[RMDB]
RNA sequence: GGGAACGACUCGAGUAGAGUCGAAAACGCGAGUGUCUUGUGAAUGCGCUCGGCGUGCGGUGUGAAAUCCAGCCUGUGAGAAUCCGCCGUCAUGCAAUUCCAUCGAGAUCUGACGAAAAAUAGCGCCUCAUGAGGGCGGGUUCGCCCGCCCUCAUGAAAAAGAAACAACAACAACAAC
Reactivity to 2A3 in 0.01 (KOAc 150mM, MgCl2 10mM, bicine 150mM(pH8.5), 24C), signal-to-noise 2, nucleotides 027 to 126: c020g000c000g070a010g070u100g040u040c050u240u240g050u030g010a080a000u110g000c000g000c020u000c140g080g020c010g020u100g000c040g030g000u000g000u070g110a040a050a020u030c040c000a080g140c030c040u300g060u200g010a130g060a090a090u010c000c000g000c000c030g060u040c060a000u090g060c020a020a100u100u000c000c000a090u080c010g000a080g000a100u040c020u010g010a110c030g050a000a170a000a000a000u070a080g050c060g000c000c000
Reactivity to DMS in 0.01 (KOAc 150mM, MgCl2 10mM, bicine 150mM(pH8.5), 24C), signal-to-noise 1, nucleotides 027 to 126: c040g020c110g010a010g000u000g000u000c020u050u000g000u000g030a120a130u020g000c130g010c040u000c050g050g020c000g040u000g020c050g000g000u000g000u130g020a040a010a160u000c020c000a070g040c130c150u070g010u020g000a100g030a040a050u020c000c000g000c060c000g000u000c000a090u010g030c000a040a060u000u000c000c050a090u010c020g000a080g020a110u050c090u010g000a090c180g020a020a300a160a090a110u000a040g000c010g000c050c020

Conditions: 150 mM KOAc, 10 mM MgCl2 and 150 mM bicine (pH 8.5), 24 C. This 177-nucleotide RNA was probed chemically with 2A3 and DMS. For 2A3 the reverse transcriptase was SuperScript II with manganese. DMS adducts were read by reverse transcription with MarathonRT. Reactivities are given for positions 27 through 126. The data come from the RNA Mapping Database (RMDB), library OK1LIB.